[RMDB]
RNA sequence: GGGAACGACUCGAGUAGAGUCGAAAACCGUAGGGUCGAUGAAAUGGGAGGCGGAUACACUACCCACCUUUGCUUCGAAAGAGGCAAAGAGGUGUAUGCCAUCCCAUGGAGACCCUAAACGGAAAUCCAAUGUCACUGUUCGCAGUGACAUUGGAAAGUUACUAACCGCCUUCGGGCGGUUAGUAACAAAAGAAACAACAACAACAAC
Reactivity to 2A3 in 0.01 (KOAc 150mM, MgCl2 10mM, bicine 150mM(pH8.5), 24C), signal-to-noise 1, nucleotides 027 to 156: c020c000g000u000a010g000g000g000u000c000g070a300u070g010a080a020a000u000g000g020g000a010g040g000c030g110g110a020u010a010c010a000c000u150a070c040c110c020a060c030c000u050u000u000g000c000u000u000c010g060a140a100a050g000a000g000g010c000a010a000a000g000a000g000g020u010g010u000a000u000g010c010c010a300u000c020c030c000a000u000g000g000a000g020a010c010c000c000u000a000a030a000c010g050g080a050a070a030u030c000c010a010a000u000g000u000c000a000c000u010g090u100u140c270g000c160a000g000u000g010a010c000a000u060u000g000g000a010a010a010

Structure probing data (2A3) for a 207-nucleotide construct. The 2A3 profile rests on 1,243 reads. For 2A3 the reverse transcriptase was SuperScript II with manganese.